RNA sequence: GGGAACGACUCGAGUAGAGUCGAAAAGGCAUCUAGCUUCUCAACCUCCAACGCGGUCAGGACAUCCAUGUCCAGCAAACCUGUAGUUGUACUAGGAUUGAGUAUAAGCAAGUACAACGGCAUUGCAAGGGCGUAGUAAAUUCGUUUACUACGCCCUAAAAGAAACAACAACAACAAC
Reactivity to 2A3 in 0.01 (KOAc 150mM, MgCl2 10mM, bicine 150mM(pH8.5), 24C), signal-to-noise 3, nucleotides 027 to 126: g050g000c010a000u010c030u100a030g030c000u080u000c020u040c010a030a080c000c020u000c010c030a060a050c050g010c000g000g020u040c040a070g030g020a010c010a030u080c070c030a090u160g000u000c000c000a010g040c060a030a050a040c000c010u040g040u100a130g010u040u000g030u010a040c020u020a060g140g080a170u100u060g010a040g070u130a110u040a210a030g040c040a010a020g020u000a000c020a080a010c020g030g010c020a070u100u200g060c050a080
Reactivity to DMS in 0.01 (KOAc 150mM, MgCl2 10mM, bicine 150mM(pH8.5), 24C), signal-to-noise 4, nucleotides 027 to 126: g020g020c020a080u010c110u000a100g000c030u000u000c010u010c030a070a140c050c020u000c080c030a050a100c080g010c140g020g000u000c110a150g010g010a040c020a060u020c150c200a060u000g000u000c010c010a140g010c140a030a090a050c050c030u010g010u000a070g000u000u000g000u000a050c040u010a080g010g000a110u000u000g010a080g010u010a100u000a040a140g010c020a040a070g010u000a030c030a050a030c030g010g010c060a060u040u000g010c140a130
The record gives the reactivity of an RNA of 177 nucleotides to 2A3 and DMS. DMS adducts were read by reverse transcription with MarathonRT. The 2A3 profile rests on 2,485 reads. Reactivities are given for positions 27 through 126.